An RNA of 177 nucleotides, treated with 2A3 and DMS and read out base by base.
For 2A3, 2,159 sequencing reads were counted.
The reactions ran in a buffer of 150 mM KOAc, 10 mM MgCl2 and 150 mM bicine (pH 8.5), at 24 C.
For DMS, 4,498 sequencing reads were counted.
In probing experiments dimethyl sulfate is read out at A N1 and C N3, which are open when not base-paired.
RNA sequence: GGGAACGACUCGAGUAGAGUCGAAAAGAUAUGGAUCCAUGAGGCUUUUGACGGCAACCGGUCGGAAACGACCGAGUUGCCGAUAAGCCUUCAUGGAUCCUAAGUCAAAGAACGCUUCGGCGUUCAACUAGAUUGAUAACUUCGGUUAUCAAUCUAGAAAAGAAACAACAACAACAAC
Reactivity to 2A3 in 0.01 (KOAc 150mM, MgCl2 10mM, bicine 150mM(pH8.5), 24C), signal-to-noise 1, nucleotides 027 to 126: g020a000u050a030u150g000g000a010u030c020c000a010u000g000a010g030g000c040u130u130u300u300g250a110c030g010g040c040a010a000c040c000g120g000u010c020g050g060a140a060a110c010g010a040c000c050g000a020g020u020u030g010c030c000g000a000u030a010a010g000c020c000u030u050c000a010u000g040g000a010u020c000c000u000a000a000g010u000c000a010a000a080g000a010a000c030g010c000u070u130c300g290g010c000g000u000u000c010a000a010
Reactivity to DMS in 0.01 (KOAc 150mM, MgCl2 10mM, bicine 150mM(pH8.5), 24C), signal-to-noise 3, nucleotides 027 to 126: g010a050u000a300u000g010g000a010u000c000c000a000u010g020a060g000g000c000u000u000u000u010g030a270c160g000g000c000a020a020c010c010g000g000u000c000g050g000a120a090a240c040g010a030c010c020g000a050g030u000u000g020c000c010g010a000u000a000a010g010c000c000u000u000c000a000u000g020g010a010u000c000c000u000a020a060g010u000c040a110a140a150g000a010a000c000g010c000u000u020c270g030g010c000g000u000u000c000a080a270